[RMDB]
RNA sequence: GGGAACGACUCGAGUAGAGUCGAAAAUGAUAUCCACAGCUGCCCGGAUACCAGCCGACGUUAUUCGAAUGAUUGGCCCGGCGCCUAAAGCGGGGCGCGAUCGCUGGGUCGAACUUGCGAGCCGCAUCCGCUAGCCUACUUUCGAGUAGGCUAGCGGAAAAGAAACAACAACAACAAC
Reactivity to 2A3 in 0.01 (KOAc 150mM, MgCl2 10mM, bicine 150mM(pH8.5), 24C), signal-to-noise 1, nucleotides 027 to 126: u070g040a010u060a070u110c000c000a050c030a010g030c040u100g070c010c000c010g000g000a020u030a100c000c000a000g000c000c000g060a100c030g030u000u090a110u100u080c020g080a040a130u200g000a130u020u020g100g000c000c000c000g110g020c010g030c020c020u220a150a030a010g010c020g070g000g000g050c120g030c050g030a040u040c030g000c040u140g000g000g000u030c030g000a050a080c040u060u020g020c000g000a040g070c000c030g000c010a090u060